[RMDB]
RNA sequence: GGGAACGACUCGAGUAGAGUCGAAAAGGGGUCACUGCGUGGGUGUAGACAUGUCCUGUACUGAAGCCUCCACGGUAUCUAAGGACAACAGCUACACCGUAACAUCGCAGUGACGGAGGCACCCAAACGGAUCAGGAUCUUCGGAUCCUGAUCCGAACUCUGUAACAGCGUUCGCGCUGUUACAGAGAAAAGAAACAACAACAACAAC
Reactivity to 2A3 in 0.01 (KOAc 150mM, MgCl2 10mM, bicine 150mM(pH8.5), 24C), signal-to-noise 1, nucleotides 027 to 156: g140g000g040g000u010c000a030c000u010g010c010g010u000g040g040g020u000g000u000a020g040a170c100a160u080g000u000c000c000u000g010u000a000c000u000g010a090a000g000c000c020u040c020c000a010c000g000g000u010a000u020c180u160a040a040g000g030a000c000a190a020c130a140g140c000u000a000c000a000c000c020g010u030a000a000c010a110u070c040g000c000a000g000u010g000a000c000g000g000a000g000g000c000a010c010c000c010a000a120a030c030g000g000a000u000c000a000g000g000a000u040c020u090u160c270g040g000a000u000c000c000u000g000a000u000c000c000g000a000a000
The record gives the reactivity of an RNA of 207 nucleotides to 2A3. Source: RMDB library RNAMAK, as collected in RNAgym. High 2A3 reactivity points to a flexible backbone, as in loops and unpaired stretches.